[RMDB]
Description:
Source: RMDB library OK2TST, as collected in RNAgym. Chemical mapping of a 177-nucleotide RNA with DMS and 2A3. The 2A3 profile rests on 1,023 reads. High 2A3 reactivity points to a flexible backbone, as in loops and unpaired stretches.
RNA sequence: GGGAACGACUCGAGUAGAGUCGAAAAAUCAGGGAUGAUCGUGUCCAGCUCGAGAUCGGAGUCGGUGAUGUUCUCCUUGAUGGAGCCCACCAUGAUCUCGGCGGGCUCGCGAGGGGCUUCUGCGCGGUCCCUGCCCAUAGUUCGCUAUGGGCAGGGAAAAAGAAACAACAACAACAAC
Reactivity to DMS in 0.01 (KOAc 150mM, MgCl2 10mM, bicine 150mM(pH8.5), 24C), signal-to-noise 1, nucleotides 027 to 126: a090u010c060a030g020g000g040a090u010g010a070u010c020g000u000g000u000c000c020a130g040c030u010c040g000a030g000a030u000c010g000g030a100g050u000c190g010g000u010g000a050u010g000u010u030c000u000c000c020u030u020g000a190u000g000g010a020g010c270c100c000a040c010c000a090u000g010a020u000c030u000c020g020g010c000g000g010g000c070u000c020g020c100g010a040g000g000g020g020c080u000u000c060u000g010c150g010c100g000g000
Reactivity to 2A3 in 0.01 (KOAc 150mM, MgCl2 10mM, bicine 150mM(pH8.5), 24C), signal-to-noise 1, nucleotides 027 to 126: a000u110c050a040g070g010g090a110u090g000a070u000c040g040u090g050u050c030c030a050g000c060u090c100g020a010g000a040u020c050g100g020a110g190u080c090g030g000u010g020a110u030g090u110u120c000u060c000c030u040u170g140a160u300g040g000a030g010c020c000c010a000c000c000a070u130g010a030u020c000u020c060g000g000c000g000g030g000c090u060c030g000c020g010a010g000g020g000g020c030u070u000c100u140g030c080g020c040g030g000
Description:
The RNA was probed in 150 mM KOAc, 10 mM MgCl2 and 150 mM bicine (pH 8.5) at 24 C.